RNA sequence: GGGAACGACUCGAGUAGAGUCGAAAAGACUAUAGAUUAAUUAGUUGAAAGUUUUGUGUUGUAAUGUAUAGUGUUGGAGAAAGUGAAAGACUUGCGGAAGUAAUUGCCGACAAGUGCCCAAGGGAAGAAGACAUACAUCAUUCGUGAUGUAUGUCUUAAAAGAAACAACAACAACAAC
Reactivity to 2A3 in 0.01 (KOAc 150mM, MgCl2 10mM, bicine 150mM(pH8.5), 24C), signal-to-noise 2, nucleotides 027 to 126: g050a000c010u000a000u200a300g140a100u050u220a110a060u140u070a110g130u030u070g070a060a120a120g040u010u030u130u180g050u040g000u000u020g060u050a120a170u060g150u110a070u080a080g090u050g030u050u100g000g060a030g090a080a060a020g080u120g120a040a040a030g110a000c000u000u000g000c000g030g000a000a000g000u180a150a130u210u140g000c000c000g050a210c010a010a000g000u000g020c000c000c000a030a030g070g000g000a030a030g000
Reactivity to DMS in 0.01 (KOAc 150mM, MgCl2 10mM, bicine 150mM(pH8.5), 24C), signal-to-noise 3, nucleotides 027 to 126: g010a040c010u000a060u010a090g000a120u010u030a070a100u020u010a040g000u010u000g000a100a100a120g010u020u020u010u000g020u010g000u000u010g010u000a060a070u010g000u010a040u020a060g010u000g010u010u010g000g010a090g010a050a060a090g000u010g010a020a040a010g000a020c010u000u000g010c020g010g000a020a040g010u020a040a070u000u030g010c010c000g000a120c000a000a010g000u000g000c000c010c040a100a090g000g000g010a090a080g020